Structure probing data (2A3 and DMS) for a 177-nucleotide construct. DMS adducts were read by reverse transcription with MarathonRT. Conditions: 150 mM KOAc, 10 mM MgCl2 and 150 mM bicine (pH 8.5), 24 C. Values are in units of 0.01, from 0 to 300, in steps of 10. 2A3 adducts were read by reverse transcription with SuperScript II with manganese. It was measured as part of the RMDB library TTRDES.
[RMDB]
RNA sequence: GGGAACGACUCGAGUAGAGUCGAAAAGAUAUGGAUCCACUGUGGUCUCAACAGCUUACUCGGAAACGAGUAAGACAUGAGGACCAUUGGAUCCUAAGUCAAAUCCUGAAAGUUCGCUUUCAGGAAACCAAAUACUGUGGUUCGCCACAGUAUUUGGAAAAGAAACAACAACAACAAC
Reactivity to 2A3 in 0.01 (KOAc 150mM, MgCl2 10mM, bicine 150mM(pH8.5), 24C), signal-to-noise 3, nucleotides 027 to 126: g000a000u040a020u110g000g000a000u000c000c030a030c180u130g020u040g070g000u050c100u080c220a160a300c020a040g000c000u000u000a000c000u010c000g030g010a020a040a030c000g000a000g000u000a010a000g020a030c010a100u150g080a250g220g000a010c000c010a000u020u010g030g000a010u000c000c000u000a040a010g000u000c040a050a050a240u070c000c000u000g010a020a000a000g040u150u270c300g030c210u000u010u000c000a000g000g010a060a030a010
Reactivity to DMS in 0.01 (KOAc 150mM, MgCl2 10mM, bicine 150mM(pH8.5), 24C), signal-to-noise 3, nucleotides 027 to 126: g000a050u010a300u010g010g020a010u000c000c000a070c300u010g020u000g000g000u000c020u000c110a190a070c110a070g000c000u000u000a000c000u000c010g000g000a090a080a130c000g010a030g000u010a000a000g000a030c070a070u000g010a180g000g030a010c000c000a040u010u000g010g010a020u000c000c000u000a000a080g010u000c000a100a140a130u000c000c000u000g010a000a010a010g020u010u020c300g020c010u000u010u000c010a020g000g000a010a020a110